Conditions: 150 mM KOAc, 10 mM MgCl2 and 150 mM bicine (pH 8.5), 24 C. Chemical mapping of a 177-nucleotide RNA with DMS and 2A3.

[RMDB]
RNA sequence: GGGAACGACUCGAGUAGAGUCGAAAAACGCAGCAGGACCGGGCCGAAGAUUCCCUUGACAACCGGGCUGACCGCACCUUCGCCAAGCGCGAAGGCGGCGUCGGCAAUGGUCUGGUCGGGAAUGCCACGUAUCCCGUAAUUUCGAUUACGGGAUACGAAAAGAAACAACAACAACAAC
Reactivity to DMS in 0.01 (KOAc 150mM, MgCl2 10mM, bicine 150mM(pH8.5), 24C), signal-to-noise 3, nucleotides 027 to 126: a110c100g010c050a040g040c110a090g000g010a110c040c030g010g000g000c040c020g010a100a090g010a100u000u000c010c000c010u020u010g030a060c090a130a060c040c030g000g000g010c010u000g000a020c080c090g030c010a180c000c010u000u000c010g010c010c020a140a160g030c160g010c000g000a020a020g010g000c020g000g010c040g000u000c000g020g010c000a050a070u010g020g010u000c090u010g000g010u010c020g000g000g010a070a060u000g020c050c130a220
Reactivity to 2A3 in 0.01 (KOAc 150mM, MgCl2 10mM, bicine 150mM(pH8.5), 24C), signal-to-noise 2, nucleotides 027 to 126: a000c050g000c030a040g020c000a020g060g070a040c010c010g030g030g010c000c020g060a050a000g060a110u020u010c020c000c000u020u170g050a050c030a060a040c030c010g080g000g000c020u030g010a040c050c030g010c020a000c010c000u000u020c010g010c020c010a300a050g060c080g000c010g160a010a000g000g020c020g050g040c000g030u010c000g020g000c000a030a080u090g000g010u000c050u130g010g000u030c010g000g000g020a080a040u070g050c020c000a090
Description: The 2A3 profile rests on 3,292 reads. It was measured as part of the RMDB library OK2TST. Reactivities are given for positions 27 through 126.